[RMDB]
RNA sequence: GGGAACGACUCGAGUAGAGUCGAAAAAACAAACAUCAAAUCGCAUAGCAAAGAGUCAAAAAAAUAGAGAGCCUUGCGAGACCUACCAAGGGUGAAGAGAUACCAUCCAAGGAGCUGAAGAGAAAUCGAGAGCUCACGGCGUUCGCGCCGUGAGCAACUUACCAACGGAGUUCGCUCCGUUGGUAAGAAAAGAAACAACAACAACAAC
Reactivity to 2A3 in 0.01 (KOAc 150mM, MgCl2 10mM, bicine 150mM(pH8.5), 24C), signal-to-noise 1, nucleotides 027 to 156: a000a000c200a040a060a000c100a080u180c100a030a030a070u010c030g020c010a010u070a070g070c060a000a050a190g100a110g000u100c140a090a270a000a000a070a070a000u260a030g120a070g000a000g040c000c030u040u060g030c020g010a030g040a060c000c000u100a180c060c070a070a040g000g000g000u040g060a130a040g040a000g000a000u040a080c000c000a000u030c000c000a020a040g000g000a000g010c060u110g000a000a040g020a030g060a110a010a070u170c130g000a080g030a010g300c060u030c000a000c000g000g070c010g140u060u210c300g000c000g110c020c000g000u000g000a000g000c000a000a000

Chemical mapping of a 207-nucleotide RNA with 2A3.
For 2A3, 363 sequencing reads were counted.
Source: RMDB library M2RFPK, as collected in RNAgym.